[RMDB]
RNA sequence: GGGAACGACUCGAGUAGAGUCGAAAAAGAGUUUAUACUCUGAUCACACAGUAACAUUGCAAUAAAAGCUUAGCUCGAGAUGCGUGUGCCGUUCUGCUUUUAAUGCGAUCUGGUUCCUUUUCUCCUCUCCGCAUAUAGUGUUCGCACUAUAUGCGGAAAAAGAAACAACAACAACAAC
Reactivity to 2A3 in 0.01 (KOAc 150mM, MgCl2 10mM, bicine 150mM(pH8.5), 24C), signal-to-noise 2, nucleotides 027 to 126: a000g040a000g010u080u200u130a190u090a080c010u000c000u030g010a040u080c030a010c020a010c020a080g080u060a140a060c050a130u080u110g000c000a000a100u030a140a060a020a020g000c030u060u130a010g010c010u040c050g140a130g030a100u140g090c090g060u120g090u150g070c040c020g010u070u050c010u040g050c020u000u000u050u100a060a050u100g040c020g000a030u000c020u020g010g020u030u040c020c000u070u050u040u040c040u020c030c030u020c000
Reactivity to DMS in 0.01 (KOAc 150mM, MgCl2 10mM, bicine 150mM(pH8.5), 24C), signal-to-noise 2, nucleotides 027 to 126: a020g020a010g020u000u030u020a130u020a090c000u000c010u000g010a190u000c120a130c110a140c090a030g010u000a070a090c220a060u000u010g010c010a040a110u000a020a020a020a060g000c030u000u000a070g010c010u000c040g000a050g020a110u000g020c030g020u000g000u000g010c010c050g000u020u000c030u000g000c020u000u000u000u000a010a060u000g000c030g010a020u000c020u000g010g000u010u000c010c020u040u000u000u000c060u000c040c100u000c130